[RMDB]
RNA sequence: GGGAACGACUCGAGUAGAGUCGAAAAUUCUUUGCUGUAGUGAAUCAGCCCUGCUACACUGCAAGAAUCAAGCCGAUUCACAAUUCACAUCAAUUCCAGGAGUGACGGCCAGAUGGCAGCAUCUGGACUAAUUACGAUCAUUCGUGAUCGUAAUUAGAAAAGAAACAACAACAACAAC
Reactivity to 2A3 in 0.01 (KOAc 150mM, MgCl2 10mM, bicine 150mM(pH8.5), 24C), signal-to-noise 9, nucleotides 027 to 126: u030u000c010u050u080u100g000c020u020g020u100a080g000u020g060a040a060u050c010a030g030c010c010c020u030g000c010u060a080c100a080c200u090g000c010a030a080g040a080a110u120c050a050a030g040c010c010g030a040u020u030c010a010c020a070a130u110u070c040a040c040a170u070c030a050a120u140u030c020c020a030g010g060a050g040u030g010a030c030g030g010c010c000a040g010a050u070g030g010c020a020g040c000a030u000c000u010g000g000a000
Reactivity to DMS in 0.01 (KOAc 150mM, MgCl2 10mM, bicine 150mM(pH8.5), 24C), signal-to-noise 9, nucleotides 027 to 126: u000u000c030u000u000u010g020c030u000g010u000a140g020u000g010a050a050u000c050a050g010c020c090c050u000g010c010u000a090c200a100c220u010g010c030a030a040g010a120a070u010c200a110a170g010c030c030g010a040u000u000c010a030c030a080a090u000u000c050a020c040a080u000c050a050a110u000u010c060c040a130g000g000a080g010u000g010a040c160g010g000c000c010a020g000a020u000g000g010c230a080g000c020a050u000c000u000g000g010a300
The record gives the reactivity of an RNA of 177 nucleotides to 2A3 and DMS. The RNA was probed in 150 mM KOAc, 10 mM MgCl2 and 150 mM bicine (pH 8.5) at 24 C. Reactivities are given for positions 27 through 126. For 2A3, 49,209 sequencing reads were counted.